[RMDB]
RNA sequence: GGGAACGACUCGAGUAGAGUCGAAAAGGGGUCCACAGCGACGAUCUCGAAGUGGAGCUUUGAUCUACACUGAAGCCUCCACGGUGUAGGGAGCUCCACCGAGAUUAGCUGUGGACGGAGGCACCCAAACGGUCAAAGUGUUCGCACUUUGACCGAAGGUGCUUCACUGGUUCGCCAGUGAAGCACCAAAAGAAACAACAACAACAAC
Reactivity to 2A3 in 0.01 (KOAc 150mM, MgCl2 10mM, bicine 150mM(pH8.5), 24C), signal-to-noise 1, nucleotides 027 to 156: g000g010g040g040u000c000c000a000c000a010g000c060g300a300c090g070a160u000c010u000c030g050a300a020g000u000g020g000a000g010c000u300u190u000g010a010u000c000u010a000c000a000c010u040g070a150a000g010c000c000u000c000c000a000c010g000g000u000g000u010a000g000g010g000a000g010c000u000c000c000a000c000c000g000a000g010a000u010u080a030g010c000u000g000u000g000g000a000c010g000g000a000g000g000c020a060c000c010c010a130a020a000c040g000g000u000c000a010a010a010g000u050g030u030u220c300g160c120a010c000u010u010u000g010a000c000c000g000a010a050
Chemical mapping of a 207-nucleotide RNA with 2A3. The 2A3 profile rests on 1,048 reads. For 2A3 the reverse transcriptase was SuperScript II with manganese.